[RMDB]
RNA sequence: GGGAACGACUCGAGUAGAGUCGAAAAUCAAACAAAAUCUUGAUCGAUAUUGGGUUGAAUUUAUAGCUGGUUUUAGUGCCGCGUUUACGUUAAUUUAUUAUUUUAACAAAAUAAGAAAAUCAGUUAAUCCUCUAACAACAUUCGUGUUGUUAGAGGAAAAAGAAACAACAACAACAAC
Reactivity to 2A3 in 0.01 (KOAc 150mM, MgCl2 10mM, bicine 150mM(pH8.5), 24C), signal-to-noise 1, nucleotides 027 to 126: u060c000a000a000a020c030a080a220a100a050u070c000u050u110g070a040u100c030g010a010u010a130u050u020g060g000g060u000u010g030a120a090u070u080u220a220u120a010g000c010u020g000g080u040u030u000u090a110g060u050g200c070c070g010c070g040u100u150u000a000c010g030u020u020a000a210u050u020u060a220u180u100a150u010u050u000u000a030a000c010a000a070a170a030u210a100a000g030a040a020a030a000u000c000a000g010u010u030a030a100

Chemical mapping of a 177-nucleotide RNA with 2A3. It was measured as part of the RMDB library OK1LIB. For 2A3, 417 sequencing reads were counted. Conditions: 150 mM KOAc, 10 mM MgCl2 and 150 mM bicine (pH 8.5), 24 C.